[RMDB]
Structure probing data (2A3 and DMS) for a 177-nucleotide construct. For 2A3, 1,464 sequencing reads were counted. Source: RMDB library OK1LIB, as collected in RNAgym.

RNA sequence: GGGAACGACUCGAGUAGAGUCGAAAAGCUGGUCCAAUCCGUACAUUAAGUGCAAAAGGUGUGGGUGGUUUCAAUACAAUUCUUAAAGAAAUCGAAGAGCGUGCACCUUUAAAACGUAACGUUGAUCCAAGCAUCUCUGUUUCGACAGAGAUGCUUGAAAAGAAACAACAACAACAAC
Reactivity to 2A3 in 0.01 (KOAc 150mM, MgCl2 10mM, bicine 150mM(pH8.5), 24C), signal-to-noise 3, nucleotides 027 to 126: g000c020u040g020g080u000c000c000a030a050u000c010c040g050u080a040c000a140u120u170a220a000g050u000g140c100a000a000a000a000g040g010u050g000u020g030g100g070u150g000g010u040u000u030c040a070a040u100a140c050a060a150u110u090c050u060u220a120a090a050g050a030a020a040u060c070g060a110a000g060a020g230c250g150u010g000c000a020c000c000u000u100u090a160a180a000a000c060g040u040a050a050c090g000u040u020g020a010u000c040
Reactivity to DMS in 0.01 (KOAc 150mM, MgCl2 10mM, bicine 150mM(pH8.5), 24C), signal-to-noise 2, nucleotides 027 to 126: g000c070u010g010g010u020c050c010a090a020u000c110c010g000u000a010c100a050u020u000a080a110g020u050g010c190a040a110a000a060g000g050u000g010u000g020g000g140u000g060g000u000u020u000c000a030a170u010a080c190a070a090u000u050c130u050u040a060a100a300g000a050a000a050u000c080g010a060a140g040a060g000c110g000u000g030c030a000c000c090u000u000u000a050a060a060a000c120g020u000a080a030c070g050u000u000g000a080u010c110